Chemical mapping of a 177-nucleotide RNA with DMS and 2A3.
DMS (dimethyl sulfate) methylates the pairing face of unpaired adenines and cytosines.
The 2A3 profile rests on 842 reads.
The RNA was probed in 150 mM KOAc, 10 mM MgCl2 and 150 mM bicine (pH 8.5) at 24 C.
RNA sequence: GGGAACGACUCGAGUAGAGUCGAAAACAAUGGGUAAAAACUCAAUUGCGGGCAUUAAAACAUUACAAGGACGAUAGGAGGGGUUUAUAUGGAUUACAAGCGCGACAAUUUAAACCGUCACGCGUUCCAUGCACUCUUCAUUCGUGAAGAGUGCAUGAAAAGAAACAACAACAACAAC
Reactivity to DMS in 0.01 (KOAc 150mM, MgCl2 10mM, bicine 150mM(pH8.5), 24C), signal-to-noise 2, nucleotides 027 to 126: c080a100a050u010g000g000g050u030a040a080a110a100a100c030u010c040a060a070u010u000g040c120g000g010g010c050a100u000u000a050a060a060a150c100a090u000u000a070c160a080a110g000g000a050c140g000a140u000a040g020g010a110g000g010g000g020u000u000u000a090u010a040u010g000g000a150u010u020a060c110a050a160g030c000g020c060g000a000c010a060a070u000u040u010a090a080a100c300c120g000u000c000a050c010g000c020g020u000u000c070
Reactivity to 2A3 in 0.01 (KOAc 150mM, MgCl2 10mM, bicine 150mM(pH8.5), 24C), signal-to-noise 1, nucleotides 027 to 126: c000a000a090u040g000g000g000u170a220a190a100a060a000c020u040c020a020a080u050u060g040c050g000g030g000c010a000u060u160a060a050a010a010c010a010u120u150a060c010a050a100g050g020a020c040g060a090u080a060g080g000a040g000g010g070g000u000u060u000a100u020a040u090g020g000a020u010u080a120c030a050a090g000c000g040c000g020a000c000a020a000u050u170u200a240a060a020c050c010g050u000c000a000c000g060c000g020u020u000c020